[RMDB]
RNA sequence: GGGAACGACUCGAGUAGAGUCGAAAACGUUAGCAGGAGCUGCAAUCGAUUCCGGAUGCACAUCGUAAUCGAUAGAAAGUAAACAUAUUGCCUGGAGAAAGUUCGCAUAACUUUUUCAAUGCGGAAAAGGGUCAAAUUGGCAGAUGCUCUAGCUCGACCGGCGUAAAUUAUUCGUAAUUUACGCCGGAAAAGAAACAACAACAACAAC
Reactivity to 2A3 in 0.01 (KOAc 150mM, MgCl2 10mM, bicine 150mM(pH8.5), 24C), signal-to-noise 2, nucleotides 027 to 156: c020g030u050u060a010g050c010a000g010g020a000g000c000u040g040c070a030a000u000c000g030a000u030u010c100c000g050g000a030u170g060c010a030c010a130u020c050g020u020a010a000u030c000g000a000u030a070g080a000a120a000g090u160a060a040a030c070a040u180a070u040u210g000c010c000u020g040g000a080g020a010a060a000g080u040u070c040g000c030a030u050a200a040c010u060u050u090u100u120c170a190a160u050g050c000g030g010a040a050a020a090g030g010g000u080c030a010a110a110u060u040g010g000c000a000g000a100u100g000c000u000c010u040a040g000c030u000c040g050a070
Reactivity to DMS in 0.01 (KOAc 150mM, MgCl2 10mM, bicine 150mM(pH8.5), 24C), signal-to-noise 1, nucleotides 027 to 156: c060g000u020u000a160g020c000a120g040g010a130g020c020u000g020c100a210a080u000c000g010a090u000u000c020c010g000g020a140u000g050c190a160c160a100u000c020g030u010a030a050u000c030g030a100u010a080g010a060a070a170g000u050a130a030a070c040a110u000a150u000u000g010c040c090u020g000g020a110g020a030a060a070g000u010u000c110g070c150a070u010a020a160c090u010u010u030u000u000c040a070a020u000g050c110g050g020a060a010a030a140g000g010g050u000c020a050a060a280u000u000g020g030c010a070g000a150u000g000c000u000c090u010a170g030c000u010c020g000a300
Overview: This 207-nucleotide RNA was probed chemically with 2A3 and DMS. For DMS the reverse transcriptase was MarathonRT. Conditions: 150 mM KOAc, 10 mM MgCl2 and 150 mM bicine (pH 8.5), 24 C. Reactivities are given for positions 27 through 156. The DMS profile rests on 1,541 reads.